The record gives the reactivity of an RNA of 207 nucleotides to 2A3.

[RMDB]
RNA sequence: GGGAACGACUCGAGUAGAGUCGAAAAACAUAGGCCAUGCUUACGAGCAUGGCCUAUGACGAAUCUCAAGCAAUCAAGCAUUCUACUUCUAUUGCAACACUGAGGAGCUUACGAGCUUCUCAGUGAAAAAAGAGAGUAAUGUUCGCAUUACUCUCAAGGUAUAGAUCGGGUUCGCCCGAUCUAUACCAAAAGAAACAACAACAACAAC
Reactivity to 2A3 in 0.01 (KOAc 150mM, MgCl2 10mM, bicine 150mM(pH8.5), 24C), signal-to-noise 1, nucleotides 027 to 156: a000c020a020u020a020g000g040c000c000a010u000g000c000u140u070a100c230g120a000g000c010a020u020g000g010c010c020u010a000u000g000a000c030g030a050a080u010c000u000c060a040a030g000c000a040a000u120c000a010a060g050c080a160u240u000c010u090a090c000u020u020c000u160a020u010u050g000c050a150a000c000a010c000u000g000a000g000g030a000g020c000u060u020a070c190g070a010g020c000u000u010c000u000c000a000g000u000g020a010a000a000a000a000a000g010a000g000a000g000u000a000a000u050g030u070u150c220g040c120a010u000u000a000c000u000c050u000c010a010a010
Conditions: 150 mM KOAc, 10 mM MgCl2 and 150 mM bicine (pH 8.5), 24 C. For 2A3, 695 sequencing reads were counted. Values are in units of 0.01, from 0 to 300, in steps of 10.